[RMDB]
RNA sequence: GGGAACGACUCGAGUAGAGUCGAAAAUCAAGCAUUGAUAGAUGGGGUGUGCCAUGGGCAACUAGUUGCUCUUCUCUUCCUGAACCUUACUCAUAGCAGCAGGAAUGGUACCCUGUGUUCUGUAAAGAAGGAGAUAAGGCAGAUGAGGCUUGAGUCCGUGGGGAAUUGAAUUCGUUCAAUUCCCCACAAAAGAAACAACAACAACAAC
Reactivity to DMS in 0.01 (KOAc 150mM, MgCl2 10mM, bicine 150mM(pH8.5), 24C), signal-to-noise 1, nucleotides 027 to 156: u000c040a040a110g010c040a110u010u000g040a230u010a100g000a090u040g000g020g020g040u000g040u000g040c050c030a070u000g020g010g000c020a050a040c110u020a160g040u000u000g000c020u000c070u000u010c040u000c000u000u000c000c010u000g000a200a200c040c020u010u000a050c020u020c040a230u010a180g000c120a180g000c080a150g010g010a070a110u020g010g050u000a070c030c000c020u020g000u000g010u000u000c050u030g010u010a050a120a090g010a060a100g040g000a020g010a110u000a100a060g020g060c030a070g010a060u000g020a100g000g000c030u000u000g000a110g020u010c030c090
Reactivity to 2A3 in 0.01 (KOAc 150mM, MgCl2 10mM, bicine 150mM(pH8.5), 24C), signal-to-noise 3, nucleotides 027 to 156: u050c020a040a000g030c030a060u050u140g070a040u110a130g100a060u130g040g000g000g030u090g010u050g050c010c010a030u020g000g010g000c010a050a020c060u070a070g110u040u030g000c010u010c000u170u070c040u050c020u090u070c020c020u050g030a090a110c010c010u040u060a050c010u050c120a070u100a140g020c070a030g020c000a000g020g000a010a000u020g050g000u030a010c000c000c030u000g000u030g020u060u000c020u050g060u090a000a010a090g060a050a020g070g030a070g020a090u110a050a100g020g000c020a000g000a050u090g050a030g010g060c010u000u010g000a000g030u050c050c070
An RNA of 207 nucleotides, treated with DMS and 2A3 and read out base by base. Values cover nucleotides 27 to 156. For DMS the reverse transcriptase was MarathonRT. Conditions: 150 mM KOAc, 10 mM MgCl2 and 150 mM bicine (pH 8.5), 24 C. The data come from the RNA Mapping Database (RMDB), library OK3TST.